[RMDB]
RNA sequence: GGGAACGACUCGAGUAGAGUCGAAAAUUUCGGUUGAUUCUGGACAGUUCGACGACCUAUGGAGCCAUCACUUUCUUAUGAUGUCAAUUUCCGGUCGACAGAUCUCAGAGCGAGAUACAGUGACCAGUGAUACAGUUCUAUUCGUAGAACUGUAUCAAAAAGAAACAACAACAACAAC
Reactivity to DMS in 0.01 (KOAc 150mM, MgCl2 10mM, bicine 150mM(pH8.5), 24C), signal-to-noise 9, nucleotides 027 to 126: u000u000u010c030g010g010u000u010g010a130u020u010c010u000g000g000a070c090a130g010u020u000c050g010a100c010g010a090c110c100u010a110u040g000g000a040g000c050c010a020u000c010a030c180u010u010u020c170u010u010a160u010g000a010u000g000u000c050a080a080u000u010u000c010c010g000g010u000c000g000a070c100a120g000a050u000c010u010c010a110g020a110g010c130g000a020g010a030u010a050c140a110g010u000g010a100c010c010a130g020
Reactivity to 2A3 in 0.01 (KOAc 150mM, MgCl2 10mM, bicine 150mM(pH8.5), 24C), signal-to-noise 9, nucleotides 027 to 126: u050u040u040c040g030g020u050u090g070a140u130u000c010u020g020g020a020c020a060g050u070u060c030g030a030c010g040a060c030c020u100a170u210g020g000a000g010c010c000a010u020c000a020c070u090u260u140c040u090u240a070u140g020a010u020g040u060c050a170a080u040u060u000c010c020g000g000u010c000g000a010c010a030g090a090u010c060u010c040a120g030a060g130c050g040a010g010a010u090a080c060a040g040u020g080a040c000c010a020g030
Chemical mapping of a 177-nucleotide RNA with DMS and 2A3. The reactions ran in a buffer of 150 mM KOAc, 10 mM MgCl2 and 150 mM bicine (pH 8.5), at 24 C. Values cover nucleotides 27 to 126.